An RNA of 177 nucleotides, treated with DMS and 2A3 and read out base by base. The reactions ran in a buffer of 150 mM KOAc, 10 mM MgCl2 and 150 mM bicine (pH 8.5), at 24 C. For 2A3, 2,862 sequencing reads were counted. For 2A3 the reverse transcriptase was SuperScript II with manganese.
RNA sequence: GGGAACGACUCGAGUAGAGUCGAAAAGAUAUGGAGUCAUACCAGAGCUGUUCGGAAACGAAUACAGCGACGAAGGUAGUGACUCCUAAGUCAAACCUGUCAAGUGCGUUCGCGCACUUGACAGGAAGUUGAGCGUAAUGUUCGCAUUACGCUCAACAAAAGAAACAACAACAACAAC
Reactivity to DMS in 0.01 (KOAc 150mM, MgCl2 10mM, bicine 150mM(pH8.5), 24C), signal-to-noise 2, nucleotides 027 to 126: g000a030u000a300u000g000g020a040g010u000c000a030u000a010c000c000a080g000a170g010c010u000g010u010u000c000g010g000a110a090a220c000g010a030a060u010a080c000a010g000c000g010a120c220g000a110a080g010g000u000a020g010u000g010a000c010u000c000c000u000a010a060g030u000c040a120a060a170c000c010u000g000u000c000a000a010g010u020g020c020g010u000u000c240g010c020g000c030a000c000u000u000g000a020c000a000g000g010a000a020
Reactivity to 2A3 in 0.01 (KOAc 150mM, MgCl2 10mM, bicine 150mM(pH8.5), 24C), signal-to-noise 2, nucleotides 027 to 126: g010a040u080a050u170g010g010a000g000u010c000a010u020a010c010c030a030g040a020g060c000u000g010u050u020c030g010g050a090a100a070c000g020a050a070u300a190c000a010g040c000g110a150c000g090a190a050g020g030u110a070g220u060g020a010c000u000c000c000u000a010a000g010u030c040a000a070a160c000c000u020g000u000c000a010a010g000u010g000c010g040u040u120c300g000c000g000c160a000c000u000u000g000a000c000a000g040g020a000a020